[RMDB]
RNA sequence: GGGAACGACUCGAGUAGAGUCGAAAAGAAGCGUGGCUGCUCACGCUGUACCUAUCUCAGUUCGGUGUAGGUCGUUCGCUCCAAGCUGGGCUGUGUGCCGUUCAGCCCGACCGCUGCGCCUUAUCCGGCCGAACUAAUCGUUCGCGAUUAGUUCGGCAAAAGAAACAACAACAACAAC
Reactivity to DMS in 0.01 (KOAc 150mM, MgCl2 10mM, bicine 150mM(pH8.5), 24C), signal-to-noise 2, nucleotides 027 to 126: g010a100a010g020c020g070u000g010g000c120u000g020c150u000c020a000c040g010c010u010g000u000a110c030c010u010a100u010c030u000c050a100g010u020u030c050g010g030u000g010u000a070g020g000u040c040g030u010u000c300g010c040u000c130c150a060a070g000c000u020g000g000g010c040u010g010u010g020u010g040c020c210g000u000u000c050a030g030c010c050c000g010a050c070c110g000c050u000g010c020g000c030c010u000u000a070u000c020c040g020
Reactivity to 2A3 in 0.01 (KOAc 150mM, MgCl2 10mM, bicine 150mM(pH8.5), 24C), signal-to-noise 1, nucleotides 027 to 126: g090a060a020g020c030g030u030g080g020c150u180g080c070u160c070a020c030g000c000u030g030u100a060c000c000u060a090u080c050u020c070a100g040u110u070c020g030g010u060g080u120a080g040g040u140c030g050u180u080c100g010c030u050c120c070a000a020g020c010u030g010g010g040c010u010g030u020g090u090g070c070c000g000u020u000c020a020g020c000c000c050g000a020c060c020g000c010u030g000c000g000c000c000u080u070a080u040c010c000g040